[RMDB]
RNA sequence: GGGAACGACUCGAGUAGAGUCGAAAAGAUAUGGAUCGUGAGGUGCCAGUCGUCCUCGGAAACGAGGAAACGACGGUAAUUCCUCUCGAUCCUAAGUCAAAGCACGUGCGUCUUCGGACGCACGUGCGCGGUGAAACAUCUUCGGAUGUUUCACCGCAAAAGAAACAACAACAACAAC
Reactivity to 2A3 in 0.01 (KOAc 150mM, MgCl2 10mM, bicine 150mM(pH8.5), 24C), signal-to-noise 1, nucleotides 027 to 126: g010a010u050a010u260g000g000a000u010c010g010u030g010a010g020g010u020g100c090c040a110g110u060c000g010u000c010c000u020c000g000g000a080a070a050c030g000a020g000g000a300a270a030c010g000a000c010g000g010u050a100a220u160u070c000c000u000c010u000c030g000a010u000c000c000u000a060a000g020u000c100a280a140a090g000c020a000c010g010u000g000c040g000u060c000u040u070c250g150g020a000c030g000c000a000c020g000u000g010c000
Reactivity to DMS in 0.01 (KOAc 150mM, MgCl2 10mM, bicine 150mM(pH8.5), 24C), signal-to-noise 1, nucleotides 027 to 126: g000a080u000a300u020g000g030a010u000c000g020u000g010a010g000g070u000g030c030c000a180g000u000c000g030u000c000c000u010c000g010g000a100a080a250c010g000a000g000g010a020a050a030c050g000a010c040g000g010u050a040a290u010u010c000c000u000c010u000c000g000a010u000c000c000u000a010a060g020u000c020a100a060a220g010c000a010c010g040u010g010c010g020u000c000u000u000c230g010g010a040c010g000c000a000c000g000u000g000c010
The record gives the reactivity of an RNA of 177 nucleotides to 2A3 and DMS. The RNA was probed in 150 mM KOAc, 10 mM MgCl2 and 150 mM bicine (pH 8.5) at 24 C. The 2A3 profile rests on 2,122 reads. 2A3 adducts were read by reverse transcription with SuperScript II with manganese. For DMS the reverse transcriptase was MarathonRT.